[RMDB]
RNA sequence: GGGAACGACUCGAGUAGAGUCGAAAAAAAGGCUUCGGCCUUUGCAAUUCCUAAGUCUAGCGCACAUCCCUUUGUCAGCUCCCUAUCGGAAACGAUAGGCCGAGCUUGGAUUUAAGGGAUAGCGCUAGAUAUGGACCGUCCACAGCUUCGGCUGUAACAAAUUACAAUUGUUCGCAAUUGUAAUUUGAAAAGAAACAACAACAACAAC
Reactivity to DMS in 0.01 (KOAc 150mM, MgCl2 10mM, bicine 150mM(pH8.5), 24C), signal-to-noise 3, nucleotides 027 to 156: a060a010a020g020g010c020u000u010c300g060g020c010c000u010u000u000g000c100a140a160u000u000c010c010u000a070a240g010u000c010u000a010g020c040g000c010a120c090a210u000c000c000c000u020u000u010g020u000c020a090g010c010u000c000c010c000u000a030u000c000g000g000a190a130a230c010g010a030u010a000g000g020c080c080g030a020g030c020u000u010g020g010a050u000u000u000a030a000g030g020g020a010u000a020g010c010g020c010u010a000g020a020u000a130u000g000g000a110c070c050g000u000c020c060a090c010a040g000c010u000u000c290g040g010c020u000g010u010a100a210
Reactivity to 2A3 in 0.01 (KOAc 150mM, MgCl2 10mM, bicine 150mM(pH8.5), 24C), signal-to-noise 4, nucleotides 027 to 156: a010a010a000g040g000c030u070u100c280g200g000c010c000u020u010u020g020c030a070a130u090u040c010c000u010a180a010g020u000c000u000a000g000c010g000c020a070c040a270u010c010c000c010u010u020u020g010u020c010a000g000c000u000c010c000c000u000a000u000c000g020g050a080a060a070c000g000a000u000a000g000g000c050c060g010a000g000c000u010u060g020g000a010u110u160u290a000a000g000g000g000a000u000a010g000c000g000c000u000a000g000a000u000a000u020g010g010a030c030c060g100u060c050c050a020c000a020g010c000u100u140c230g140g000c000u000g010u040a040a010